[RMDB]
RNA sequence: GGGAACGACUCGAGUAGAGUCGAAAAGAUAAGCUAGCAGCAAAAAGGAACCGAUUCCCACCAAGUUCGGAAAGAGAUGCCGGGCGAGGCGCUGAAGAAAGAAUCUCGCUUCAGACACCCCAAGGACAUGACCUUAAAAUGUUCGCAUUUUAAGGAACUAUAAAUUAGUGUUCGCACUAAUUUAUAGAAAAGAAACAACAACAACAAC
Reactivity to 2A3 in 0.01 (KOAc 150mM, MgCl2 10mM, bicine 150mM(pH8.5), 24C), signal-to-noise 2, nucleotides 027 to 156: g020a050u100a000a060g010c030u060a010g110c050a000g050c040a060a100a050a020a050g060g000a080a040c020c040g050a110u040u000c000c000c000a010c000c000a090a040g030u040u060c000g000g030a050a100a010g050a020g030a040u070g020c000c010g000g000g020c030g020a030g040g000c050g000c050u030g020a050a020g040a060a270a030g050a080a100u060c080u030c080g010c000u020u010c010a030g050a070c010a090c030c020c020c020a020a040g030g000a010c020a100u150g040a050c000c010u000u000a000a000a000a000u000g010u050u060c160g010c090a000u010u000u000u000a000a000g010g000a020a010
Reactivity to DMS in 0.01 (KOAc 150mM, MgCl2 10mM, bicine 150mM(pH8.5), 24C), signal-to-noise 1, nucleotides 027 to 156: g000a130u010a070a120g000c000u010a070g000c040a170g050c060a040a030a130a190a090g000g020a030a120c000c020g020a160u000u000c020c000c020a080c030c040a080a250g020u000u000c020g030g000a070a100a070g000a080g030a040u000g010c010c030g010g020g010c040g010a140g020g020c070g010c020u000g000a020a040g020a150a070a060g000a130a110u000c000u000c040g000c010u000u010c020a070g010a300c060a090c000c020c000c020a030a090g000g030a140c050a090u000g010a130c000c020u000u000a000a010a040a000u020g000u000u010c300g020c020a010u000u000u000u000a010a020g000g000a030a120
This 207-nucleotide RNA was probed chemically with 2A3 and DMS. The RNA was probed in 150 mM KOAc, 10 mM MgCl2 and 150 mM bicine (pH 8.5) at 24 C. Values cover nucleotides 27 to 156.